Structure probing data (2A3) for a 207-nucleotide construct.
It was measured as part of the RMDB library OK3TST.
The reactions ran in a buffer of 150 mM KOAc, 10 mM MgCl2 and 150 mM bicine (pH 8.5), at 24 C.
Values cover nucleotides 27 to 156.
2A3 adducts were read by reverse transcription with SuperScript II with manganese.
Reactivities are rounded to 0.1 and cut off at 0 and 3.
RNA sequence: GGGAACGACUCGAGUAGAGUCGAAAAGCUGUACAGUAAAUCAAACUAUACGGGUCUUGUCGGACUGUAUGACUCACACAACUUUACCAUUACGAGUGGUGCUUGAUAUGGCAACCGCAUUUAUGAUCACAGCAACAAUCAUAUUGGGUAUGUGGGGGCGACUCUAAAUAUUCGUAUUUAGAGUCGCAAAAGAAACAACAACAACAAC
Reactivity to 2A3 in 0.01 (KOAc 150mM, MgCl2 10mM, bicine 150mM(pH8.5), 24C), signal-to-noise 2, nucleotides 027 to 156: g020c030u010g000u040a020c010a090g040u100a060a050a060u160c050a050a090a070c090u050a040u060a250c110g060g000g010u070c080u030u080g080u080c000g100g030a020c000u020g010u010a030u040g020a020c000u030c010a000c000a000c020a050a110c030u130u150u150a080c010c010a040u040u130a060c060g030a040g030u040g000g020u020g010c010u090u050g000a080u110a060u250g040g000c050a080a050c020c010g050c030a010u050u070u080a060u050g040a050u050c050a040c020a130g140c010a030a070c020a000a050u010c000a010u000a040u110u060g050g010g020u140a050u140g000u060g010g000g000g050